[RMDB]
This 177-nucleotide RNA was probed chemically with 2A3 and DMS. It was measured as part of the RMDB library OK2TST. The reactions ran in a buffer of 150 mM KOAc, 10 mM MgCl2 and 150 mM bicine (pH 8.5), at 24 C.

RNA sequence: GGGAACGACUCGAGUAGAGUCGAAAAGGGUCGGCUUGCCUGUGGCGCUGGGUUUCGCAGUGGUAGAGGUGCUGCUCUCGCCAGCGGCAACCACCUCUAUUUGGGCCUUGUCUAGCUCUUCGAGCGGAAUCAUUGAUACUUUCGAGUAUCAAUGAUUAAAAGAAACAACAACAACAAC
Reactivity to 2A3 in 0.01 (KOAc 150mM, MgCl2 10mM, bicine 150mM(pH8.5), 24C), signal-to-noise 8, nucleotides 027 to 126: g040g010g010u070c070g030g030c100u030u060g020c020c020u130g040u030g070g000c020g000c060u040g030g040g000u030u110u160c080g000c030a070g070u070g100g070u140a050g030a060g100g060u040g000c000u000g000c000u000c000u000c030g060c030c020a030g030c020g010g000c000a000a010c010c010a010c010c000u000c010u040a130u030u060u060g030g010g000c010c000u030u030g040u030c040u040a050g010c010u010c000u100u090c110g020a020g020c030g010g060
Reactivity to DMS in 0.01 (KOAc 150mM, MgCl2 10mM, bicine 150mM(pH8.5), 24C), signal-to-noise 9, nucleotides 027 to 126: g000g000g010u000c100g020g010c190u000u000g010c020c020u010g030u000g010g010c030g020c150u000g010g010g010u000u010u010c180g010c040a070g010u000g010g010u000a070g010a090g010g020u000g010c050u000g010c000u000c020u000c090g010c050c050a040g010c110g000g010c020a030a060c110c030a060c020c000u000c040u000a070u000u000u000g010g000g010c030c040u000u000g010u000c050u000a100g010c010u000c020u010u000c140g010a060g010c040g010g010